[RMDB]
RNA sequence: GGGAACGACUCGAGUAGAGUCGAAAAAAAGGGACAGACUGGCCUUGUGUGGGUGGAAUACUCCGAUAGCGUUCCGUUCGGGUGUGUGGAGCUGCCGGAAGCUUUCCGGGUUGUCUACGGUCUACCCCGCUAGUAUGUCCUUCGGGACAUACUAGCGAAAAGAAACAACAACAACAAC
Reactivity to DMS in 0.01 (KOAc 150mM, MgCl2 10mM, bicine 150mM(pH8.5), 24C), signal-to-noise 1, nucleotides 027 to 126: a070a030a070g000g000g000a060c070a070g020a010c060u010g010g000c000c030u000u010g020u020g010u010g000g030g010u000g010g020a110a110u010a040c050u020c040c050g010a090u000a070g020c050g000u000u010c020c030g010u000u000c070g010g010g020u010g020u000g030u000g040g010a110g000c050u000g020c160c010g000g030a010a070g000c190u010u000u000c010c060g000g000g010u010u010g010u010c040u010a110c070g000g000u000c030u000a070c040c000c040